The data come from the RNA Mapping Database (RMDB), library OK2TST. The record gives the reactivity of an RNA of 177 nucleotides to DMS. For DMS the reverse transcriptase was MarathonRT. The RNA was probed in 150 mM KOAc, 10 mM MgCl2 and 150 mM bicine (pH 8.5) at 24 C. Values cover nucleotides 27 to 126.

[RMDB]
RNA sequence: GGGAACGACUCGAGUAGAGUCGAAAAGCACGCCGACGCCUACCGGUUCUUCACGGCCUGCGCCUCGAACCCGACGGCCACAGAGGUAGAUGUGGCCGUUCUCUCCAGGUGCCUCAAGGGCGGAGGAAAGGGCUUAUUACUUCGGUAAUAAGCCCUUAAAAGAAACAACAACAACAAC
Reactivity to DMS in 0.01 (KOAc 150mM, MgCl2 10mM, bicine 150mM(pH8.5), 24C), signal-to-noise 1, nucleotides 027 to 126: g000c060a130c190g020c060c020g010a140c060g000c010c010u010a090c110c050g000g000u020u000c040u000u000c140a150c040g020g010c080c040u000g000c010g020c000c020u020c140g020a030a150c070c040c090g040a050c000g010g040c000c020a020c000a010g020a190g040g030u000a050g000a170u000g010u000g000g050c000c010g000u020u000c010u010c130u010c030c030a060g000g020u000g000c010c090u020c150a130a090g010g010g000c000g070g000a110g010g000a030